[RMDB]
RNA sequence: GGGAACGACUCGAGUAGAGUCGAAAAGCGUACUACUAACGAUUGUCAGGAGGGUGGCUGUAAGUGAUCCCAAAUAGGAUCAUUCAGGCCACCUACCCACCCUGACAAAUCGUUAGUAUCGCAAAGACUGAAGCUCGUUUCGACGAGCUUCAGUCAAACAGGUAUGUGGAUUCGUCCACAUACCUGUAAAAGAAACAACAACAACAAC
Reactivity to 2A3 in 0.01 (KOAc 150mM, MgCl2 10mM, bicine 150mM(pH8.5), 24C), signal-to-noise 2, nucleotides 027 to 156: g010c010g060u140a090c040u010a010c010u000a040a020c000g010a000u000u000g010u000c030a000g000g030a000g040g020g010u020g010g000c050u010g070u120a050a070g020u000g000a000u020c010c010c080a120a240a100u300a090g010g000a000u010c000a000u070u000c030a010g030g030c000c010a000c000c000u000a000c000c020c000a060c000c000c000u000g030a000c000a000a010a000u000c000g000u010u010a000g000u000a000u020c000g000c000a000a100a000g000a000c000u000g000a010a010g000c000u000c000g000u040u100u180c260g070a020c000g020a010g000c000u000u000c000a000g000u000c010a000a000
Reactivity to DMS in 0.01 (KOAc 150mM, MgCl2 10mM, bicine 150mM(pH8.5), 24C), signal-to-noise 1, nucleotides 027 to 156: g000c010g020u010a060c080u000a030c020u000a020a000c000g010a050u000u000g020u010c000a060g030g000a240g020g000g020u010g020g050c000u000g000u000a120a080g010u000g000a010u000c000c000c000a010a190a290u020a040g020g010a020u010c010a030u000u000c090a300g000g050c000c000a040c010c020u000a000c050c000c090a300c110c000c010u000g010a020c000a040a030a050u000c010g000u000u000a000g000u000a010u010c010g010c030a090a050a090g010a070c000u000g010a020a060g000c000u000c000g020u020u000u000c300g000a080c040g020a020g010c010u000u010c000a000g010u010c000a010a060
Annotation: The record gives the reactivity of an RNA of 207 nucleotides to 2A3 and DMS. Source: RMDB library RNAMAK, as collected in RNAgym. The DMS profile rests on 2,814 reads. For DMS the reverse transcriptase was MarathonRT.